[RMDB]
RNA sequence: GGGAACGACUCGAGUAGAGUCGAAAACUAUGCAGAUUCGUCUGCAUAGAGACCCGAUGAAGCGGCACUUACACAGCUUCAUACACGUAUGAAGUGCAAUAAAGGGACGAGGGUUCGCCCUCGUCAACGCUCCACUUAGGUUCGCCUAAGUGGAGCGAAAAGAAACAACAACAACAAC
Reactivity to 2A3 in 0.01 (KOAc 150mM, MgCl2 10mM, bicine 150mM(pH8.5), 24C), signal-to-noise 2, nucleotides 027 to 126: c010u000a010u010g020c020a000g000a030u030u090c100g090u000c050u020g000c010a000u000a010g000a000g020a020c000c000c000g000a040u070g010a020a010g030c070g050g050c040a020c070u050u140a050c130a000c030a060g030c000u000u000c000a000u020a050c120a010c110g130u140a100u180g070a130a010g010u020g040c050a030a050u170a300a170a050g190g020g000a000c000g010a000g040g000g020u020u060c180g130c010c000c000u000c000g000u010c000a010a010
Reactivity to DMS in 0.01 (KOAc 150mM, MgCl2 10mM, bicine 150mM(pH8.5), 24C), signal-to-noise 1, nucleotides 027 to 126: c000u000a000u000g000c000a040g000a010u000u040c140g000u000c010u000g020c000a020u000a030g030a090g010a180c040c000c020g030a060u000g020a030a010g000c000g030g000c000a080c080u000u030a180c170a090c190a140g030c010u000u000c030a020u010a220c050a040c300g000u020a140u010g000a010a040g040u010g020c060a240a040u010a010a050a090g020g020g010a040c000g000a000g010g000g010u000u000c270g000c020c000c020u000c000g010u000c000a040a090
This 177-nucleotide RNA was probed chemically with 2A3 and DMS. 2A3 adducts were read by reverse transcription with SuperScript II with manganese. Conditions: 150 mM KOAc, 10 mM MgCl2 and 150 mM bicine (pH 8.5), 24 C. The 2A3 profile rests on 1,644 reads. Values cover nucleotides 27 to 126.